[RMDB]
RNA sequence: GGGAACGACUCGAGUAGAGUCGAAAAACGCUUCACAACGUGCGGCAAAGAAACAUUGUUUAUGCAAAGGCACUUCGCAAUGUGUGCUCAAACAUUGCUUAUUCAAACACGCUUCACAAUGUGCGACAAAACUUCACGGUCUUCGGACCGUGAAGAAGUCGAAAAAUCACUUCGGUGAUUUUUCGACAAAAGAAACAACAACAACAAC
Reactivity to 2A3 in 0.01 (KOAc 150mM, MgCl2 10mM, bicine 150mM(pH8.5), 24C), signal-to-noise 2, nucleotides 027 to 156: a000c030g000c100u110u050c060a030c010a110a090c020g000u020g050c000g050g000c080a040a120a010g090a050a110a010c020a110u030u020g060u010u090u030a040u090g000c030a030a120a050g080g000c010a020c000u090u140c110g000c080a050a040u060g000u000g020u050g050c040u030c160a050a060a030c030a060u040u000g010c040u090u050a140u170u120c060a000a070a000c060a000c110g000c010u090u060c000a000c000a010a060u070g000u000g010c000g030a000c030a010a140a010a000c000u000u000c000a000c000g000g010u000c000u010u010c030g080g020a000c000c000g000u000g000a000a000g010a000a000